[RMDB]
RNA sequence: GGGAACGACUCGAGUAGAGUCGAAAAGAUAUGGAGGGUGAACUACGUGACGAUGUACGAAGAACUCGGAAACGAGGGAGUACUAAGUCACGCACCCUCCUAAGUCAAAGGGCUGUUCGCAGCCCAAGCAUACAUCAUACUUCGGUAUGAUGUAUGCAAAAGAAACAACAACAACAAC
Reactivity to 2A3 in 0.01 (KOAc 150mM, MgCl2 10mM, bicine 150mM(pH8.5), 24C), signal-to-noise 6, nucleotides 027 to 126: g040a040u070a030u150g000g010a010g000g040g010u030g010a090a090c110u150a060c300g000u000g010a010c020g010a050u220g000u000a000c020g110a300a100g030a090a020c000u010c010g020g030a060a050a020c000g010a000g000g010g010a010g000u000a000c000u020a070a020g000u000c000a000c000g000c000a000c000c000c000u000c000c000u000a000a010g010u010c010a030a050a050g000g000g010c010u030g050u110u120c280g000c150a000g000c020c000c000a000a000
Reactivity to DMS in 0.01 (KOAc 150mM, MgCl2 10mM, bicine 150mM(pH8.5), 24C), signal-to-noise 5, nucleotides 027 to 126: g010a040u000a300u000g000g010a020g000g020g010u000g000a060a080c150u010a300c020g010u000g000a000c000g000a190u010g020u000a010c000g000a150a140g000a110a210c010u000c000g010g010a110a060a210c010g010a010g000g000g000a100g010u000a010c000u010a160a220g000u000c000a000c010g000c000a000c000c000c000u000c010c000u000a000a030g010u010c040a110a110a110g000g010g000c000u000g000u000u010c160g030c030a030g010c000c000c000a010a070